[RMDB]
Background:
This 177-nucleotide RNA was probed chemically with 2A3 and DMS. The data come from the RNA Mapping Database (RMDB), library OK2TRN.
RNA sequence: GGGAACGACUCGAGUAGAGUCGAAAAUGCCUACAGGUGCAUGUGCGGGGCGCCAAACUGCCGGGGCACGAUGGACACGCAGCCGGAGCGCUUCAAGGACUUUGGCAAGCGCGUGGAGGUGUUCUGGGGUGACUCAUAAUUUCGAUUAUGAGUCACCAAAAGAAACAACAACAACAAC
Reactivity to 2A3 in 0.01 (KOAc 150mM, MgCl2 10mM, bicine 150mM(pH8.5), 24C), signal-to-noise 2, nucleotides 027 to 126: u100g050c000c000u060a050c050a070g080g050u050g030c020a050u040g050u050g160c070g050g040g010g020c060g010c020c000a050a090a000c070u170g050c000c000g000g000g000g000c010a010c040g080a160u140g070g030a000c010a010c030g000c000a000g030c000c030g060g010a010g000c150g030c030u170u150c130a070a080g090g030a090c030u060u030u000g010g030c020a040a050g140c060g000c020g040u020g020g050a090g000g050u010g010u010u050c030u030g050g030
Reactivity to DMS in 0.01 (KOAc 150mM, MgCl2 10mM, bicine 150mM(pH8.5), 24C), signal-to-noise 2, nucleotides 027 to 126: u010g000c020c000u010a070c190a110g020g010u000g010c010a050u020g010u000g020c080g020g020g010g000c040g010c050c040a020a090a140c160u010g000c000c040g040g010g010g030c030a020c030g010a130u010g020g020a180c030a060c040g020c040a150g000c020c000g010g000a130g000c090g000c060u000u010c280a090a130g010g000a080c060u000u000u020g000g030c050a070a080g020c090g000c030g020u000g000g010a110g020g000u000g000u010u000c020u010g020g000

Description: The RNA was probed in 150 mM KOAc, 10 mM MgCl2 and 150 mM bicine (pH 8.5) at 24 C. For 2A3, 1,819 sequencing reads were counted.